[RMDB]
RNA sequence: GGGAACGACUCGAGUAGAGUCGAAAAGAAACGCAAGGCCGCUGACCGACGGGAUAUUGUGGGGCCUACCACAGGGGACGCGGCGUUAUCACUUGCCUUUUAAGCCGACCGUCUGGGCUGCAUACAAACCACCCAACUAUCUUCGGAUAGUUGGGAAGUUAAUAACUCACUUCGGUGAGUUAUUAACAAAAGAAACAACAACAACAAC
Reactivity to 2A3 in 0.01 (KOAc 150mM, MgCl2 10mM, bicine 150mM(pH8.5), 24C), signal-to-noise 2, nucleotides 027 to 156: g020a010a090a000c080g020c020a010a010g160g000c010c010g010c060u050g080a020c000c030g040a040c030g040g070g030a110u080a110u270u090g030u030g000g010g040g040c010c000u040a070c010c010a000c010a010g030g000g010g020a000c050g000c000g010g000c010g010u040u040a040u030c020a020c120u000u030g010c020c000u030u140u040u120a040a020g010c020c020g040a100c020c020g020u030c040u060g060g000g000c040u040g000c010a070u110a100c060a010a100a040c040c040a050c030c020c000a000a000c000u000a000u000c010u030u050c060g070g000a000u000a000g000u000u000g000g000g000a000a000
Reactivity to DMS in 0.01 (KOAc 150mM, MgCl2 10mM, bicine 150mM(pH8.5), 24C), signal-to-noise 2, nucleotides 027 to 156: g030a100a040a060c050g000c020a040a090g000g050c010c010g020c030u000g010a300c000c000g000a150c080g020g000g040a150u010a060u010u000g020u040g000g020g020g060c150c160u000a020c020c040a020c010a110g020g010g010g010a250c150g000c020g010g000c020g010u000u000a060u010c100a190c050u000u000g020c010c020u000u000u000u000a020a080g030c020c020g020a080c020c020g020u010c030u000g000g000g040c020u020g010c040a100u000a120c050a050a060a090c030c050a140c000c000c000a020a040c000u000a010u000c020u000u010c300g030g010a040u000a000g010u000u010g010g010g000a000a010